[RMDB]
RNA sequence: GGGAACGACUCGAGUAGAGUCGAAAAUAGCUAGUCUCUCUCUAGCGUACGUACCUAGUGUCGAGUACUACGUACAGAGCUGAUCCGCUAGACAUGAUGAUCGUACCAUGACAUGCUAGAGUACCUACCCGCACUGUAAUUUCGAUUACAGUGCGGGAAAAGAAACAACAACAACAAC
Reactivity to 2A3 in 0.01 (KOAc 150mM, MgCl2 10mM, bicine 150mM(pH8.5), 24C), signal-to-noise 3, nucleotides 027 to 126: u030a020g010c020u020a030g000u020c010u000c000u000c000u000c030u100a040g000c010g030u020a010c080g000u020a020c010c000u030a040g030u020g050u120c040g030a040g060u020a000c010u020a040c090g030u000a010c020a030g080a020g070c070u090g050a130u070c050c070g020c010u020a020g020a060c030a100u110g010a080u080g010a030u050c020g000u030a030c020c050a060u140g010a020c020a040u130g010c010u010a010g010a000g070u020a020c000c000u020a070
Reactivity to DMS in 0.01 (KOAc 150mM, MgCl2 10mM, bicine 150mM(pH8.5), 24C), signal-to-noise 3, nucleotides 027 to 126: u000a040g010c030u000a160g000u010c040u000c100u000c110u000c030u000a050g030c060g010u010a040c140g020u010a010c010c070u000a220g020u000g020u000c080g020a110g010u000a080c020u000a010c150g010u000a040c110a120g020a060g010c150u010g000a070u000c150c130g000c020u000a060g000a040c060a040u010g000a110u010g000a040u000c060g000u010a080c070c080a100u010g020a040c080a130u010g000c020u000a020g010a080g010u010a080c020c030u000a170
Structure probing data (2A3 and DMS) for a 177-nucleotide construct.
Values cover nucleotides 27 to 126.
2A3 adducts were read by reverse transcription with SuperScript II with manganese.